[RMDB]
RNA sequence: GGGAACGACUCGAGUAGAGUCGAAAAGAGGUAAGCGUCGCGGCCUGCUUCCAGGCUACCCUGAUUUUGGUUCGUGGCUCCUCCUGACCCUGAGAACCUCUGUCGCCUCAGAUCAGAACCGUCGUCGGAUAAGUCGAGAGUUCGCUCUCGACUUAUCAAAAGAAACAACAACAACAAC
Reactivity to 2A3 in 0.01 (KOAc 150mM, MgCl2 10mM, bicine 150mM(pH8.5), 24C), signal-to-noise 6, nucleotides 027 to 126: g090a020g010g020u100a120a030g050c030g060u050c010g030c010g020g020c000c010u040g010c040u090u030c110c010a020g050g010c090u120a110c020c000c010u030g090a120u020u070u110u130g070g010u100u170c040g010u040g020g000c020u020c010c000u010c000c010u050g070a080c000c030c000u030g060a070g020a070a020c000c020u040c020u060g060u050c020g020c000c010u020c010a020g010a110u050c010a030g030a090a020c000c020g050u060c010g040u020c050g080
Reactivity to DMS in 0.01 (KOAc 150mM, MgCl2 10mM, bicine 150mM(pH8.5), 24C), signal-to-noise 3, nucleotides 027 to 126: g000a050g020g000u030a070a060g030c100g010u020c050g000c060g010g000c030c020u010g000c110u000u000c070c030a070g010g010c100u010a130c110c050c020u010g000a100u020u010u000u000g010g010u040u000c040g030u000g010g000c040u010c030c020u000c040c030u000g010a090c030c020c030u000g000a040g000a100a060c040c020u000c020u010g000u010c070g030c030c030u020c060a070g020a080u030c060a100g010a070a080c050c050g000u000c040g020u020c040g000